[RMDB]
RNA sequence: GGGAACGACUCGAGUAGAGUCGAAAAGCUUGAGAACCAGUGGCAAUGUGAUCUAAGUAUUUUAUAUGCAUAUCCUAUGUAUUCCUCUCAAAACUGCAGUGAAAUGAGUGCUGUCAUCCCUGUUGUACAGAGCAGGAGGCUGAGGCUUGGCGAGGUAGCCCCAUUAAAUGUUCGCAUUUAAUGGGGCAAAAGAAACAACAACAACAAC
Reactivity to DMS in 0.01 (KOAc 150mM, MgCl2 10mM, bicine 150mM(pH8.5), 24C), signal-to-noise 1, nucleotides 027 to 156: g010c060u000u010g030a130g000a100a100c020c040a130g050u010g000g050c030a060a130u000g010u000g010a080u010c050u000a100a210g000u010a040u000u000u040u000a150u010a130u050g010c000a110u000a070u000c010c040u000a040u000g040u000a180u000u000c040c000u010c060u000c010a020a080a080a110c060u000g000c060a060g000u000g030a010a050a060u020g000a070g020u000g020c060u000g020u000c050a110u000c030c020c020u010g090u010u010g000u000a090c060a080g020a140g000c080a060g030g020a000g020g000c040u000g010a070g010g010c040u000u010g040g020c050g040a050g040g030u010a270
Reactivity to 2A3 in 0.01 (KOAc 150mM, MgCl2 10mM, bicine 150mM(pH8.5), 24C), signal-to-noise 1, nucleotides 027 to 156: g000c000u010u000g010a020g040a120a070c040c030a000g010u030g060g010c030a040a040u060g040u050g020a090u010c090u080a090a020g070u000a230u040u220u080u100a100u010a020u140g000c020a040u020a040u100c040c030u030a000u070g000u000a040u070u040c050c010u020c030u010c030a120a030a020a040c090u110g000c000a010g050u020g100a050a100a020u070g010a020g010u060g000c050u030g070u060c010a040u050c000c000c000u030g000u020u040g020u010a050c050a110g050a010g070c070a020g000g000a020g020g030c050u030g000a000g000g060c050u010u050g020g010c030g050a030g000g040u050a040
Structure probing data (DMS and 2A3) for a 207-nucleotide construct.
For DMS, 2,011 sequencing reads were counted.
The reactions ran in a buffer of 150 mM KOAc, 10 mM MgCl2 and 150 mM bicine (pH 8.5), at 24 C.
The 2A3 profile rests on 586 reads.